[RMDB]
Notes:
An RNA of 177 nucleotides, treated with DMS and 2A3 and read out base by base. The reactions ran in a buffer of 150 mM KOAc, 10 mM MgCl2 and 150 mM bicine (pH 8.5), at 24 C. For DMS the reverse transcriptase was MarathonRT.
RNA sequence: GGGAACGACUCGAGUAGAGUCGAAAACCUCGGUAAUGGCGAAUGGGACCCACAACUCUCUCUAGGAUCCGAUAGAGAUCCGAGAGAAAAGUGGCUCUCCCUUAGCCAUCCGAGUGGACGUCUGUCCGCCUUAGAAAAUGUUCGCAUUUUCUAAGGCAAAAGAAACAACAACAACAAC
Reactivity to DMS in 0.01 (KOAc 150mM, MgCl2 10mM, bicine 150mM(pH8.5), 24C), signal-to-noise 3, nucleotides 027 to 126: c120c000u010c000g000g000u010a050a010u000g000g000c000g000a160a060u000g010g000g020a030c270c000c000a010c000a070a300c220u000c000u000c000u010c000u000a210g020g000a010u010c000c000g000a210u010a150g000a150g000a000u000c000c000g000a020g010a030g010a010a030a080a180g010u000g010g000c000u000c100u000c010c010c000u000u000a300g000c010c000a000u000c000c000g000a010g010u000g010g000a020c030g010u000c160u010g000u000c030c010
Reactivity to 2A3 in 0.01 (KOAc 150mM, MgCl2 10mM, bicine 150mM(pH8.5), 24C), signal-to-noise 3, nucleotides 027 to 126: c010c000u010c000g000g010u120a090a030u000g000g000c010g040a040a040u030g000g000g000a020c030c040c000a010c000a030a140c030u000c000u000c010u010c040u100a090g000g010a010u010c010c030g220a270u160a190g140a010g000a020u000c000c000g000a010g000a000g000a010a030a000a010g000u000g000g000c010u000c000u010c000c000c000u010u000a000g000c000c000a000u000c000c000g000a000g000u070g000g010a030c050g100u110c200u240g030u010c010c030